[RMDB]
RNA sequence: GGGAACGACUCGAGUAGAGUCGAAAAGCGCAUUCGUGCGCCACAAAGGGGUCUAUAUCAAAGCCUUCGCAGCCGAGGAUCCUGAAGCCUCCACGGGGGAGGCUGUUCGGGCUUGACCACGUAGACGGAGGCACCCGUUCGCUACUUUCGAGUAGAAAACCUUCUACAAUUUCGAUUGUAGAAGGUUAAAAGAAACAACAACAACAAC
Reactivity to DMS in 0.01 (KOAc 150mM, MgCl2 10mM, bicine 150mM(pH8.5), 24C), signal-to-noise 2, nucleotides 027 to 156: g000c020g040c000a100u000u010c250g030u010g010c020g010c020c040a070c120a080a150a160g000g030g040g040u020c060u010a140u000a120u000c150a110a150a120g010c000c000u000u000c070g030c090a090g000c000c010g000a100g010g020a080u000c000c010u000g000a040a050g010c000c000u000c000c020a270c140g000g010g000g020g000a020g040g040c010u000g030u000u000c070g000g000g020c040u020u010g000a040c000c030a060c120g020u000a050g040a080c000g030g010a040g010g000c010a070c020c010c010g010u000u000c030g010c010u000a040c020u000u000u010c070g000a170g000u000a120g000a140a070
Reactivity to 2A3 in 0.01 (KOAc 150mM, MgCl2 10mM, bicine 150mM(pH8.5), 24C), signal-to-noise 3, nucleotides 027 to 156: g020c000g000c000a010u080u170c250g150u030g030c000g050c020c010a090c100a020a110a010g050g000g010g020u060c070u090a190u040a060u300c100a110a130a020g000c000c010u000u010c020g010c030a010g050c040c000g060a130g020g020a030u020c000c010u020g020a040a000g020c000c000u030c000c000a050c040g010g000g000g000g060a000g000g000c000u000g010u070u050c010g000g020g010c010u060u090g040a070c000c020a020c020g040u050a020g080a170c080g010g000a000g000g000c000a030c010c020c010g020u100u060c060g000c020u030a020c000u020u060u150c140g090a040g030u090a090g050a090a120

An RNA of 207 nucleotides, treated with DMS and 2A3 and read out base by base. It was measured as part of the RMDB library RNAMAK. For DMS the reverse transcriptase was MarathonRT. DMS (dimethyl sulfate) methylates the pairing face of unpaired adenines and cytosines.